RNA sequence: GGGAACGACUCGAGUAGAGUCGAAAAGCUGGUCAGAAAUCUGAGCGGUCACCAGUACGUCAGUCAGGCGGUUGAUUCACUGCAUGACAGCGUCAGGACUGACGCGGGCCUGGCCGUCUGGCGUGCCAGGCGUGACCGGAUUCGUCCGGUCACGCCUAAAAGAAACAACAACAACAAC
Reactivity to 2A3 in 0.01 (KOAc 150mM, MgCl2 10mM, bicine 150mM(pH8.5), 24C), signal-to-noise 5, nucleotides 027 to 126: g020c020u060g030g120u050c020a050g060a130a290a100u150c030u050g040a030g080c000g000g050u090c030a030c060c010a020g050u110a010c000g000u000c010a020g010u010c010a030g010g010c010g020g080u040u030g080a140u110u110c110a070c240u180g050c140a120u140g040a070c030a060g010c000g000u000c000a040g040g210a110c140u060g010a020c010g010c010g010g020g020c020c070u080g080g010c010c000g030u020c020u020g010g030c030g000u060g010c010c020
Reactivity to DMS in 0.01 (KOAc 150mM, MgCl2 10mM, bicine 150mM(pH8.5), 24C), signal-to-noise 2, nucleotides 027 to 126: g010c030u000g000g010u000c020a140g000a080a110a110u020c030u050g040a100g000c000g000g040u000c050a130c050c010a150g010u000a100c040g000u010c000a020g040u000c010a070g010g020c040g000g000u020u010g010a110u020u010c090a110c120u020g020c110a240u020g020a130c160a050g000c000g000u000c000a070g030g000a060c030u010g000a000c000g000c070g000g010g000c090c040u000g020g000c020c040g020u030c070u030g020g040c030g010u040g020c020c070